Source: RMDB library OK2TST, as collected in RNAgym. Structure probing data (DMS and 2A3) for a 177-nucleotide construct. The DMS profile rests on 1,064 reads. Conditions: 150 mM KOAc, 10 mM MgCl2 and 150 mM bicine (pH 8.5), 24 C. DMS adducts were read by reverse transcription with MarathonRT.
RNA sequence: GGGAACGACUCGAGUAGAGUCGAAAAGCAUUUCAACCGCAUUGGUCUCCAGCCGCCGGAUGACGAGCGAGGGAUCAAUAUCGAGCGCAUUCGCGUCAUAGCGCCGGUCCUGCAUGGCAAUCAGCGACUGCUAGUCAGUCUUCGGACUGACUAGCAGAAAAGAAACAACAACAACAAC
Reactivity to DMS in 0.01 (KOAc 150mM, MgCl2 10mM, bicine 150mM(pH8.5), 24C), signal-to-noise 2, nucleotides 027 to 126: g010c080a110u000u000u030c080a070a150c090c050g030c200a070u000u000g000g020u000c020u010c020c140a300g000c080c050g000c030c000g030g010a140u030g000a060c010g000a100g040c010g020a290g020g010g000a060u000c080a020a050u000a100u000c080g010a080g040c000g000c010a130u000u030c080g000c040g000u010c050a060u000a170g010c040g030c010c020g020g030u000c000c020u000g010c060a070u010g000g000c030a080a060u000c120a090g020c060g030a120
Reactivity to 2A3 in 0.01 (KOAc 150mM, MgCl2 10mM, bicine 150mM(pH8.5), 24C), signal-to-noise 1, nucleotides 027 to 126: g020c030a060u030u180u200c080a050a070c010c000g040c040a020u000u020g050g010u000c010u010c010c000a040g010c000c000g000c010c000g200g130a190u200g020a090c030g020a020g050c030g000a040g010g050g000a020u030c000a040a010u070a060u180c060g060a100g040c010g000c040a060u130u050c030g020c000g130u010c040a060u040a070g020c040g000c000c040g070g000u000c000c000u040g030c000a080u030g020g040c000a030a080u040c010a040g020c020g030a030